[RMDB]
RNA sequence: GGGAACGACUCGAGUAGAGUCGAAAACACGCGACCUUCACGCAGUAUGUGAUGGAGAAGGGGAUAGAAAGUGUGAAGUUUUCGACCAUCAUUAUGGACGAGUGCCACUUUCUGGACCCGAUGUCCACGAGGCAAUAAGGUUCGCCUUAUUGCCUCGAAAAGAAACAACAACAACAAC
Reactivity to DMS in 0.01 (KOAc 150mM, MgCl2 10mM, bicine 150mM(pH8.5), 24C), signal-to-noise 4, nucleotides 027 to 126: c090a160c150g000c070g030a090c050c020u010u010c060a050c060g020c150a160g040u000a100u020g020u000g010a080u000g000g000a080g000a160a140g000g000g000g020a300u010a000g000a000a000a010g010u000g030u000g010a080a060g000u000u000u010u000c010g000a100c000c000a020u000c300a090u010u000a160u020g010g000a130c000g000a030g030u010g000c020c000a000c000u000u000u000c000u000g010g000a300c010c010c020g010a050u010g000u000c010c030a130
Reactivity to 2A3 in 0.01 (KOAc 150mM, MgCl2 10mM, bicine 150mM(pH8.5), 24C), signal-to-noise 3, nucleotides 027 to 126: c060a020c050g060c060g040a110c000c030u060u050c020a020c030g030c020a030g080u300a120u220g070u060g060a180u050g000g000a040g030a130a050g020g010g000g010a000u030a030g000a000a010a000g010u060g020u080g100a100a090g110u110u070u040u040c030g020a040c060c000a000u060c030a050u120u300a010u040g020g000a010c000g010a000g020u050g010c000c010a020c000u020u010u000c000u010g000g020a010c000c010c000g000a010u030g010u000c030c000a080